[RMDB]
Structure probing data (DMS and 2A3) for a 177-nucleotide construct. The 2A3 profile rests on 1,103 reads.

RNA sequence: GGGAACGACUCGAGUAGAGUCGAAAAUUGGGAUGUAUCUUGUGAUAGCUGGGUUUUAUAAGUGCAAUAUUAAAGUAAACCAUGAGUCUUUUAAGCCCAGCAUGUGGAGUUGAGCAUGCUGGGUUAUCCCUAUAUUCAACUUCGGUUGAAUAUAGGGAAAAGAAACAACAACAACAAC
Reactivity to DMS in 0.01 (KOAc 150mM, MgCl2 10mM, bicine 150mM(pH8.5), 24C), signal-to-noise 2, nucleotides 027 to 126: u000u000g000g000g010a050u000g020u000a060u000c050u000u000g020u000g000a040u000a080g010c030u000g000g010g010u010u000u010u000a050u010a080a070g010u000g010c050a080a060u020a050u010u010a030a030a120g000u000a050a070a150c040c040a080u020g020a170g010u000c020u010u000u010u000a070a170g000c010c010c000a000g010c000a000u000g010u000g010g030a140g050u000u020g010a300g000c000a000u000g000c000u000g010g000g000u000u010a000u000
Reactivity to 2A3 in 0.01 (KOAc 150mM, MgCl2 10mM, bicine 150mM(pH8.5), 24C), signal-to-noise 1, nucleotides 027 to 126: u050u060g070g040g000a030u040g040u080a070u050c040u050u100g070u060g030a060u040a040g010c010u020g060g020g030u040u040u040u000a150u060a090a060g050u020g040c000a060a040u060a020u170u180a140a100a130g050u080a020a050a030c000c000a050u060g100a030g060u010c030u040u080u010u140a050a010g000c000c020c000a000g000c000a010u000g020u010g010g080a290g130u040u130g060a040g000c010a000u010g000c000u000g000g000g000u010u000a000u000

2A3 adducts were read by reverse transcription with SuperScript II with manganese. The RNA was probed in 150 mM KOAc, 10 mM MgCl2 and 150 mM bicine (pH 8.5) at 24 C. Source: RMDB library RFMREP, as collected in RNAgym.